[RMDB]
RNA sequence: GGGAACGACUCGAGUAGAGUCGAAAAGACGGCAGCAGGCGCGGAACUUGCCCAAUGCGCGGCGCGCGAGGCAGCGACGGGGAGCGCGCGAGCGAGGCGGGCCCACAGCCCCCGCCGCGGAGCCGAGGCAAGAACAUGAGUUCGCUCAUGUUCUUGCAAAAGAAACAACAACAACAAC
Reactivity to 2A3 in 0.01 (KOAc 150mM, MgCl2 10mM, bicine 150mM(pH8.5), 24C), signal-to-noise 3, nucleotides 027 to 126: g120a010c010g000g030c000a010g020c060a120g050g000c000g000c050g020g030a030a050c030u060u120g020c020c010c000a010a010u040g010c000g000c000g060g050c010g000c000g000c010g020a070g150g000c060a050g050c060g100a090c060g060g020g020g040a050g020c000g000c000g000c000g020a020g020c010g000a010g000g000c050g010g010g000c000c030c020a110c030a010g040c000c000c000c020c000g000c000c010g000c040g010g080a010g010c000c010g000a020g030
Reactivity to DMS in 0.01 (KOAc 150mM, MgCl2 10mM, bicine 150mM(pH8.5), 24C), signal-to-noise 3, nucleotides 027 to 126: g020a150c010g010g000c020a120g020c090a090g010g050c020g010c300g000g000a050a060c060u050u000g000c020c000c010a050a200u110g000c000g040c020g000g050c050g000c030g000c040g010a240g010g000c070a010g020c060g000a060c090g020g020g000g030a220g030c000g010c010g010c010g000a140g030c010g010a150g000g000c260g000g040g010c020c160c060a010c230a100g000c190c000c020c020c000g000c000c000g000c000g000g000a100g030c010c000g020a090g030